This 170-nucleotide RNA was probed chemically with 2A3 and DMS.
Reactivities are rounded to 0.1 and cut off at 0 and 3.
For DMS, 11,738 sequencing reads were counted.

[RMDB]
RNA sequence: GGGAACGACUCGAGUAGAGUCGAAAAUUGAAGGUAAAACAGCCUGUGGGUGAAACACACCCACAGGGCCCACUGGGCGCUAGCACUCUGGUAUCACGGUACCUUUGUGCGCCUGUUUUACCGAAGGCUAGUGAGAGCUUCGGCUCUCACAAAAGAAACAACAACAACAAC
Reactivity to 2A3 in 0.01 (KOAc 150mM, MgCl2 10mM, bicine 150mM(pH8.5), 24C), signal-to-noise 3, nucleotides 027 to 129: u110u080g070a110a030g000g010u010a020a000a000a000c000a000g000c000c000u010g000u000g020g000g000u000g010a040a070a010c100a000c010a010c010c000c010a010c000a010g000g000g000c010c000c000a050c120u210g000g000g000c020g000c100u110a050g010c000a020c000u000c000u000g000g030u010a000u030c020a050c250g120g000u000a000c000c000u010u010u010g000u000g000c020g010c000c000u000g000u010u010u000u000a000c000c000g010a010a000g000g020c020u040a020
Reactivity to DMS in 0.01 (KOAc 150mM, MgCl2 10mM, bicine 150mM(pH8.5), 24C), signal-to-noise 3, nucleotides 027 to 129: u080u060g000a130a100g010g020u040a000a040a050a020c000a000g000c000c000u000g040u000g010g050g060u070g000a180a160a000c220a090c010a010c000c000c000a020c020a030g040g000g020c010c030c020a000c300u000g030g020g020c020g010c060u050a070g090c010a010c020u000c030u000g000g000u010a030u020c030a130c230g000g000u000a010c020c010u020u020u000g030u020g000c030g010c010c010u070g000u050u060u060u000a040c030c030g000a000a000g020g010c070u020a110